Structure probing data (DMS) for a 177-nucleotide construct. For DMS, 719 sequencing reads were counted. The reactions ran in a buffer of 150 mM KOAc, 10 mM MgCl2 and 150 mM bicine (pH 8.5), at 24 C.
[RMDB]
RNA sequence: GGGAACGACUCGAGUAGAGUCGAAAAAAACGAUACGGAUGCACACUUCGUUGAUAGAUGAAGCGAGUUCAGUUUUAGGUGUUGCCUUCAAGUCUAAAGUAGAUCUACUAAAUGUAGGAUUUUACAGUGUGGUCGAACAAUUCGUUGUUCGACCACAAAAAGAAACAACAACAACAAC
Reactivity to DMS in 0.01 (KOAc 150mM, MgCl2 10mM, bicine 150mM(pH8.5), 24C), signal-to-noise 1, nucleotides 027 to 126: a090a060a050c120g000a080u000a120c080g000g000a050u000g040c100a060c070a050c020u010u000c060g000u000u000g020a110u020a140g010a060u000g010a100a030g000c150g000a090g050u000u000c050a110g000u000u000u020u010a060g000g010u000g030u010u020g030c030c030u000u000c040a100a120g000u000c010u000a050a070a120g010u000a010g020a000u000c000u010a050c030u000a110a080a040u030g010u020a040g000g010a110u000u000u000u000a050c060a090g010